[RMDB]
RNA sequence: GGGAACGACUCGAGUAGAGUCGAAAAGAUAUGGAAGACUCUACCCACCCCUGAAUCCUGGUAUCGGAAACGAUACCCAGGUGAGGAGGAGUCUUCCUAAGUCAAAACAUGGCGUUCGCGCCAUGAACAAAUAAACAUGGUUCGCCAUGUUUAUUUGAAAAGAAACAACAACAACAAC
Reactivity to DMS in 0.01 (KOAc 150mM, MgCl2 10mM, bicine 150mM(pH8.5), 24C), signal-to-noise 9, nucleotides 027 to 126: g010a040u000a060u010g000g000a050a030g000a010c000u000c010u000a150c060c100c150a300c110c020c010c010u000g000a200a080u010c010c010u010g000g000u000a000u000c000g010g000a040a030a060c000g010a010u000a000c270c040c020a000g010g010u000g000a160g010g010a200g000g000a030g010u000c000u000u000c000c000u000a000a040g000u000c030a100a080a110a210c010a000u000g000g010c000g020u000u010c180g020c030g010c000c000a000u000g000a080a180
Reactivity to 2A3 in 0.01 (KOAc 150mM, MgCl2 10mM, bicine 150mM(pH8.5), 24C), signal-to-noise 4, nucleotides 027 to 126: g010a030u070a040u140g000g000a010a010g000a000c000u000c010u090a180c030c050c060a230c030c050c000c010u070g200a170a040u080c010c010u000g000g000u000a000u000c000g000g010a030a010a010c000g000a000u020a030c110c020c000a000g000g010u020g040a070g010g090a060g000g020a000g000u000c000u000u000c000c000u000a000a000g020u020c030a010a010a130a210c010a020u010g010g000c030g030u080u090c300g000c020g000c000c000a000u010g000a000a010

Background: This 177-nucleotide RNA was probed chemically with DMS and 2A3. It was measured as part of the RMDB library TTRDEL. For DMS the reverse transcriptase was MarathonRT. The RNA was probed in 150 mM KOAc, 10 mM MgCl2 and 150 mM bicine (pH 8.5) at 24 C. For 2A3, 20,119 sequencing reads were counted.